[RMDB]
RNA sequence: GGGAACGACUCGAGUAGAGUCGAAAAGCUAUGCCUUGAUAUGGACCUUCACGUUUGGACAACAGCAGGCAUCGGAAACGAUGCCUGACAUGUCCAAACGUGAGAGGUCCUAAGUCUGUAACGGAAAGAUAUGAUUAUUCUUCGGAAUAAUCAUAUCAAAAGAAACAACAACAACAAC
Reactivity to DMS in 0.01 (KOAc 150mM, MgCl2 10mM, bicine 150mM(pH8.5), 24C), signal-to-noise 9, nucleotides 027 to 126: g010c150u010a100u010g010c080c050u000u000g010a060u010a300u010g000g010a010c000c000u000u000c000a010c000g000u000u000u000g000g010a010c000a040a090c300a170g000c000a010g000g010c000a000u000c000g010g000a140a110a230c010g010a010u000g010c000c000u000g000a010c060a150u000g000u000c000c000a000a000a010c000g010u000g000a020g010a020g010g010u000c000c000u000a010a070g010u000c030u010g010u010a060a070c090g010g010a150a110a110
Reactivity to 2A3 in 0.01 (KOAc 150mM, MgCl2 10mM, bicine 150mM(pH8.5), 24C), signal-to-noise 2, nucleotides 027 to 126: g060c080u170a100u300g150c020c020u070u150g050a050u060a080u260g000g000a000c000c000u000u000c000a010c020g000u010u000u000g000g000a000c010a220a020c050a170g140c010a010g000g030c000a000u010c000g000g010a050a070a000c020g000a000u010g030c000c000u000g040a030c000a000u010g010u010c000c000a000a010a000c020g000u000g020a010g000a000g010g000u000c000c000u000a000a000g000u000c090u140g300u270a240a100c190g050g090a240a100a050